[RMDB]
RNA sequence: GGGAACGACUCGAGUAGAGUCGAAAAGCUCAGCUUUUCAUUUGAAGAGGUGGAAGGAGCUGACACCGUCCCAUCCCGGCAGGGCUGGCUCAGGUCUUCUUUAGGUCCUGAGUGGGGGUCCAGCACAGAACCAUAACGUGUUCGCACGUUAUGGUUCAAAAGAAACAACAACAACAAC
Reactivity to 2A3 in 0.01 (KOAc 150mM, MgCl2 10mM, bicine 150mM(pH8.5), 24C), signal-to-noise 2, nucleotides 027 to 126: g010c060u010c030a000g020c010u060u030u010u040c020a090u020u050u210g190a180a100g050a070g120g030u030g020g030a020a090g010g170a030g010c020u030g010a000c000a020c020c050g070u010c000c000c000a020u050c000c010c010g130g020c050a050g020g010g020c020u030g060g000c020u010c010a020g000g010u000c000u120u050c000u140u290u220a040g050g000u070c010c040u010g000a040g000u050g000g110g000g000g000u000c020c000a030g000c070a060c000a070
Reactivity to DMS in 0.01 (KOAc 150mM, MgCl2 10mM, bicine 150mM(pH8.5), 24C), signal-to-noise 1, nucleotides 027 to 126: g010c100u000c020a100g020c020u020u010u010u010c010a080u020u010u010g010a150a090g020a040g000g040u000g000g000a030a020g000g000a040g000c040u000g000a040c080a140c120c060g000u010c000c010c030a220u010c060c010c020g040g030c050a090g030g010g020c020u000g000g000c000u000c000a010g010g010u000c010u000u010c260u010u010u010a060g030g020u000c010c020u000g000a080g020u000g010g020g010g010g020u020c010c040a040g000c020a110c240a130

Source: RMDB library OK2TRN, as collected in RNAgym. Structure probing data (2A3 and DMS) for a 177-nucleotide construct. Values cover nucleotides 27 to 126. For 2A3 the reverse transcriptase was SuperScript II with manganese.